[RMDB]
An RNA of 207 nucleotides, treated with DMS and 2A3 and read out base by base. For 2A3 the reverse transcriptase was SuperScript II with manganese. Conditions: 150 mM KOAc, 10 mM MgCl2 and 150 mM bicine (pH 8.5), 24 C. The 2A3 profile rests on 3,689 reads.
RNA sequence: GGGAACGACUCGAGUAGAGUCGAAAAUUGUGGACGAAGCGGCUAAAACUUACACAACUCGCCCAAAGCACCCUGCCCGUCGGGUCGCUGAGGGUUAACUUAAUAGACACGGCUACGCAUGUAGUACCGACAGCGGAGUACUGGCGGACGGGGGUUCGAUAAUGAUAGCGUUCGCGCUAUCAUUAUCAAAAGAAACAACAACAACAAC
Reactivity to DMS in 0.01 (KOAc 150mM, MgCl2 10mM, bicine 150mM(pH8.5), 24C), signal-to-noise 2, nucleotides 027 to 156: u000u000g020u000g030g020a100c040g010a070a090g040c040g030g040c050u010a060a100a070a110c080u000u000a110c080a050c030a030a050c050u000c060g000c010c000c000a080a190a070g020c040a050c000c010c000u000g030c010c000c040g030u000c010g010g000g000u000c020g010c010u000g020a250g000g020g020u000u000a040a160c060u000u010a080a130u010a110g010a090c030a030c010g010g000c000u000a030c030g000c180a110u000g020u000a020g010u000a030c020c000g000a120c010a010g000c040g010g000a160g020u000a060c010u010g010g050c000g040g000a020c040g000g020g020g000g010u000u000c020
Reactivity to 2A3 in 0.01 (KOAc 150mM, MgCl2 10mM, bicine 150mM(pH8.5), 24C), signal-to-noise 4, nucleotides 027 to 156: u030u020g000u010g020g040a050c090g030a170a030g040c040g100g050c110u090a060a090a020a050c050u080u110a020c030a010c010a030a050c010u040c070g040c000c000c000a080a060a000g050c050a110c010c000c000u000g000c000c000c000g000u020c000g010g000g000u010c020g000c000u010g010a070g030g050g000u000u020a020a010c000u000u110a020a030u090a140g070a030c060a010c110g050g000c020u020a010c050g040c110a070u300g000u030a020g000u010a090c010c010g090a100c020a010g000c010g020g030a050g080u110a180c010u010g000g000c000g010g000a010c010g010g000g000g010g010u040u140c060